[RMDB]
RNA sequence: GGGAACGACUCGAGUAGAGUCGAAAACAGAUUUCGAGAGGAAUUUGGUAUAUCAAAAGGUAUAAGACGCUCCAAGUACAGAUGGGUCGAACUAAGACGGAGCGCAGGAUGGUUGAGUUAUACGGGAGUAUUCCAGCAAUGCUGGACCAUCGUACAAAAAUUUAAAUGCAUUCGUGCAUUUAAAUUUAAAAGAAACAACAACAACAAC
Reactivity to 2A3 in 0.01 (KOAc 150mM, MgCl2 10mM, bicine 150mM(pH8.5), 24C), signal-to-noise 3, nucleotides 027 to 156: c020a020g040a050u030u090u090c100g020a040g020a060g050g020a030a020u030u000u050g030g010u110a120u010a030u150c080a060a090a070a060g080g010u140a130u020a100a040g040a050c020g000c010u000c030c050a080a040g040u030a040c040a040g030a010u080g030g000g070u010c060g030a080a030c060u070a090a060g030a020c070g000g010a020g020c000g000c030a000g050g020a030u050g030g000u020u040g050a040g040u120u020a040u020a110c010g030g020g010a090g030u040a050u110u000c000c000a010g000c040a130a220u270g010c000u020g000g000a000c000c000a020u020c010g000u020a010c050a000a140
Reactivity to DMS in 0.01 (KOAc 150mM, MgCl2 10mM, bicine 150mM(pH8.5), 24C), signal-to-noise 3, nucleotides 027 to 156: c030a100g010a060u010u000u000c030g020a260g020a300g020g010a010a010u000u000u000g000g010u000a070u010a070u000c050a070a080a090a100g010g000u000a070u010a120a120g020a120c030g020c000u000c010c030a090a150g020u000a110c070a090g010a080u010g030g010g000u000c060g020a080a120c070u010a060a130g010a160c080g010g000a040g040c020g000c040a010g000g010a020u010g010g030u000u000g020a070g020u000u010a080u000a050c030g000g030g000a070g010u000a120u000u000c010c000a050g000c010a070a100u000g020c010u000g000g010a020c050c000a030u000c010g050u000a040c070a030a060